RNA sequence: GGGAACGACUCGAGUAGAGUCGAAAAUUGGAGAGGAGUUGCUGUCGGGACCCGUCCCGCAGCCAGUCGGAAGAAGAAUAAAACUGCCUCGAGGCAGCGCACAGACUGGUUGGAUCGCUCGACGAUCACCCAGGCUGAAUUUCGAUUCAGCCUGGGUAAAAGAAACAACAACAACAAC
Reactivity to DMS in 0.01 (KOAc 150mM, MgCl2 10mM, bicine 150mM(pH8.5), 24C), signal-to-noise 3, nucleotides 027 to 126: u010u000g010g000a070g000a050g000g000a100g000u010u000g010c050u000g000u020c020g000g000g030a040c050c040c130g020u040c000c030c000g000c000a000g010c020c030a010g000u030c020g000g000a140a100g000a130a110g010a090a100u060a100a080a170a130c000u010g010c010c000u000c220g010a160g000g010c010a010g010c160g000c100a150c120a220g000a000c000u000g000g020u000u000g000g000a030u010c010g000c060u070c130g000a110c010g000a060u030c020
Reactivity to 2A3 in 0.01 (KOAc 150mM, MgCl2 10mM, bicine 150mM(pH8.5), 24C), signal-to-noise 2, nucleotides 027 to 126: u090u060g000g030a060g000a050g050g090a070g030u120u000g010c030u110g240u300c010g000g000g000a050c080c000c060g050u030c000c030c000g000c010a000g000c000c000a000g000u050c080g110g050a000a060g020a080a000g100a170a050u230a140a090a030a020c010u000g010c000c040u190c200g000a250g000g000c010a010g010c010g020c120a040c010a060g030a000c000u000g000g000u020u000g000g010a000u000c010g000c070u120c110g140a140c000g000a030u000c000